[RMDB]
RNA sequence: GGGAACGACUCGAGUAGAGUCGAAAAUGGGCCGUGUGCUUAACCAGGACAAGAUCUCGUUCUCUCCAACGUUGUUGCCAACUCAUGAUUCUCCUAACCUGUGCUUGGAGAGACGUGGACCCAGAGUAAAACGAAGGGUGCUUCGGCACCCUUCGAAUCAACUUGUACAGUUCGCUGUACAAGUUGAAAAAGAAACAACAACAACAAC
Reactivity to DMS in 0.01 (KOAc 150mM, MgCl2 10mM, bicine 150mM(pH8.5), 24C), signal-to-noise 1, nucleotides 027 to 156: u000g000g010g060c020c030g070u010g060u010g000c050u000u010a110a080c100c060a210g000g020a130c110a050a150g010a230u010c000u030c010g040u000u000c000u000c000u000c010c030a080a110c190g020u000u000g060u000u000g000c010c080a020a130c040u000c050a120u010g000a180u000u000c040u000c050c050u000a100a110c030c050u000g000u000g030c040u000u000g010g000a060g000a030g040a040c040g000u020g000g020a080c000c030c000a230g000a100g010u020a100a050a160a220c010g010a020a000g100g020g050u000g000c010u000u020c260g070g000c000a010c000c000c000u000u000c000g000a030a110

An RNA of 207 nucleotides, treated with DMS and read out base by base. The reactions ran in a buffer of 150 mM KOAc, 10 mM MgCl2 and 150 mM bicine (pH 8.5), at 24 C. For DMS, 2,166 sequencing reads were counted.